[RMDB]
RNA sequence: GGGAACGACUCGAGUAGAGUCGAAAACGUGAACAUCGCUCUGCUAAGUCCCGUCGUUCUUCCAGUCAGAGCGAGAUUGUAAGCAACCUUAUGCGCAAUGAAGACAUAGAGGGACUUCUCUAGGAAGCCACCCGCUACCAUUCGUGGUAGCGGGUGGAAAAGAAACAACAACAACAAC
Reactivity to 2A3 in 0.01 (KOAc 150mM, MgCl2 10mM, bicine 150mM(pH8.5), 24C), signal-to-noise 1, nucleotides 027 to 126: c000g060u110g140a070a020c000a230u000c000g000c000u030c000u030g130c060u060a060a000g100u060c000c000c000g070u090c000g000u060u070c000u060u000c010c000a070g110u110c000a000g000a000g000c100g000a000g000a020u000u210g010u090a040a040g050c000a000a300c000c000u100u000a000u070g070c040g000c150a080a210u060g000a140a000g100a000c000a060u220a010g060a070g090g020g060a040c030u100u000c010u000c050u040a150g010g020a020a020g000